The data come from the RNA Mapping Database (RMDB), library OK1LIB. Structure probing data (2A3) for a 177-nucleotide construct. For 2A3, 499 sequencing reads were counted. For 2A3 the reverse transcriptase was SuperScript II with manganese. The RNA was probed in 150 mM KOAc, 10 mM MgCl2 and 150 mM bicine (pH 8.5) at 24 C.
[RMDB]
RNA sequence: GGGAACGACUCGAGUAGAGUCGAAAAUCGACGCCACGACGCUCAUCGUGAAGGACAUGCUUUGGAUGGGAAGCAUGCCGGAUGAGGUGUGCGGUGAGUUUUUUUUCUUUCUCAACGCAAAACACCCACCGGACAGCGUGUUCGCACGCUGUCCGGUAAAAGAAACAACAACAACAAC
Reactivity to 2A3 in 0.01 (KOAc 150mM, MgCl2 10mM, bicine 150mM(pH8.5), 24C), signal-to-noise 1, nucleotides 027 to 126: u140c040g040a000c040g020c090c020a010c110g090a040c020g000c230u000c000a000u080c000g070u010g120a130a100g070g020a060c000a000u050g010c000u000u000u100g170g030a170u110g100g090g000a000a000g000c000a000u000g000c010c000g090g000a060u020g030a020g090g000u010g060u000g020c000g000g050u010g000a020g010u010u010u010u010u010u010u010u010c000u000u060u040c000u000c000a000a060c020g050c000a000a000a140a000c000a070c000c030c000